[RMDB]
RNA sequence: GGGAACGACUCGAGUAGAGUCGAAAAGAUAUGGACGUAGUAGGGAGUUGCUCGGAAACGAGGCAACGACGAUCUACACGUCCUAAGUCAAAAGUCUUCACGGAAAGUUCGCUUUCCGUGAAGACAACCCUCGUAUCUUGUUCGCAAGAUACGAGGGAAAAGAAACAACAACAACAAC
Reactivity to 2A3 in 0.01 (KOAc 150mM, MgCl2 10mM, bicine 150mM(pH8.5), 24C), signal-to-noise 2, nucleotides 027 to 126: g010a020u060a060u140g020g000a020c010g000u110a120g000u000a000g300g010g000a020g000u000u010g020c000u010c030g020g080a060a080a050c040g030a070g170g170c000a010a000c020g060a100c000g000a000u000c000u000a010c020a000c020g000u000c000c000u000a060a020g080u040c040a110a090a000a000g010u000c010u030u010c010a000c010g000g020a000a000a000g030u050u170c290g020c210u000u000u010c000c030g000u000g000a000a000g000a000c000a000a000
Reactivity to DMS in 0.01 (KOAc 150mM, MgCl2 10mM, bicine 150mM(pH8.5), 24C), signal-to-noise 1, nucleotides 027 to 126: g030a010u010a300u000g000g000a000c030g000u000a100g060u000a010g000g000g000a030g010u010u000g010c000u000c020g000g000a100a120a200c020g000a060g010g000c000a010a020c000g000a080c200g000a040u000c010u000a000c000a000c010g010u000c000c000u000a010a070g020u000c040a060a090a080a090g020u000c000u010u000c000a000c000g000g000a000a000a010g030u000u020c290g000c000u000u000u000c000c010g000u000g000a000a000g000a000c000a030a000